[RMDB]
RNA sequence: GGGAACGACUCGAGUAGAGUCGAAAAGAUAUGGAUCUGGUGACCACGGAGCGAUGAAAUACAGUGGGAUCGGAAACGAUCCGUAACAUCUGUAUGGAGCUCCGAGUGGUCACCAGAUCCUAAGUCACACUGGUAUUAUGUUCGCAUAAUACCAGUGAAAAGAAACAACAACAACAAC
Reactivity to DMS in 0.01 (KOAc 150mM, MgCl2 10mM, bicine 150mM(pH8.5), 24C), signal-to-noise 5, nucleotides 027 to 126: g010a030u000a300u000g010g010a010u000c010u010g000g010u000g000a010c000c000a070c000g020g000a020g020c020g010a120u030g020a160a140a010u000a000c000a000g020u000g020g000g000a010u010c010g010g000a140a110a210c010g010a010u000c000c000g010u010a050a150c180a030u010c000u000g000u000a010u000g010g010a090g000c000u000c000c010g010a030g030u010g010g010u000c000a000c000c000a000g000a000u000c000c000u000a010a050g010u000c040a290